[RMDB]
RNA sequence: GGGAACGACUCGAGUAGAGUCGAAAAGCAGCAGUAAGUGGCCUUUUUCUUUUGUGGUUUUUGCUACCAAUGCUUACAACUUUGUACAAUCAAACUAAAGCAACAGUUGAUCAAAGUGAUCCUACAAUUUCUACUUUGUUACAACUAGGUGAUGGUGACACCACAAUUUCUUCGGAAAUUGUGGUGUAAAAGAAACAACAACAACAAC
Reactivity to 2A3 in 0.01 (KOAc 150mM, MgCl2 10mM, bicine 150mM(pH8.5), 24C), signal-to-noise 1, nucleotides 027 to 156: g010c000a000g000c000a040g010u070a080a030g000u020g030g050c050c000u100u050u040u000u120c090u070u150u120u140g140u140g030g020u070u010u030u230u140g040c020u000a000c000c000a010a000u040g000c000u050u070a050c010a090a060c060u020u060u110g020u070a020c020a040a100u080c020a090a070a030c040u150a120a050a040g010c020a000a090c020a050g000u020u000g000a010u020c000a000a000a000g000u020g010a040u020c000c000u150a160c060a160a160u000u000u160c000u080a050c010u000u030u070g020u010u020a090c000a040a000c000u000a060g010g110u120g010a050u160g030g000u070g000
An RNA of 207 nucleotides, treated with 2A3 and read out base by base. For 2A3, 655 sequencing reads were counted. 2A3 adducts were read by reverse transcription with SuperScript II with manganese. The reactions ran in a buffer of 150 mM KOAc, 10 mM MgCl2 and 150 mM bicine (pH 8.5), at 24 C.